[RMDB]
This 207-nucleotide RNA was probed chemically with 2A3 and DMS. Source: RMDB library M2RFPK, as collected in RNAgym. Values are in units of 0.01, from 0 to 300, in steps of 10. The DMS profile rests on 2,310 reads.
RNA sequence: GGGAACGACUCGAGUAGAGUCGAAAACCAGAUGACGGUCCUGCCAUGAGACCGCAACGAGACCAUGUCGCAUCGAAUGGACUCGGGGAGUCGGCAGCUUGCCCCACGGAUGAGCGCCUAAUGCCGGAAGAGACGUGCAACUUCGGUUGCACGUCAAGUGGGUGUAAUGAUUCGUCAUUACACCCACAAAAGAAACAACAACAACAAC
Reactivity to 2A3 in 0.01 (KOAc 150mM, MgCl2 10mM, bicine 150mM(pH8.5), 24C), signal-to-noise 3, nucleotides 027 to 156: c010c000a020g050a180u110g020a040c020g010g020u010c010c010u070g170c110c030a170u140g030a080g000a140c040c030g010c010a020a040c010g020a000g030a070c010c000a050u120g020u210c110g050c190a170u130c190g030a000a000u030g000g000a060c000u010c030g010g000g000g020a060g080u080c020g010g000c000a040g020c030u070u120g030c000c000c030c070a060c040g050g000a110u050g030a040g020c020g080c030c050u060a090a060u150g000c000c000g030g040a050a030g060a010g000a060c010g000u000g000c000a000a000c000u020u000c110g100g000u000u000g000c010a010c000g000u000c010a000a000
Reactivity to DMS in 0.01 (KOAc 150mM, MgCl2 10mM, bicine 150mM(pH8.5), 24C), signal-to-noise 1, nucleotides 027 to 156: c000c000a160g000a080u000g000a060c000g020g010u000c010c030u040g070c010c200a160u000g000a090g000a020c010c030g040c000a060a070c040g010a030g010a110c000c050a050u010g020u000c020g020c090a130u000c050g040a050a230u010g000g000a150c010u010c010g010g000g000g000a110g010u010c000g000g060c010a130g020c070u010u010g000c000c000c000c030a130c120g020g000a070u000g000a110g030c060g100c030c000u010a050a130u010g000c000c020g020g000a130a200g000a200g000a020c020g000u000g010c020a030a020c000u000u000c280g090g000u000u000g000c010a000c010g010u010c000a000a050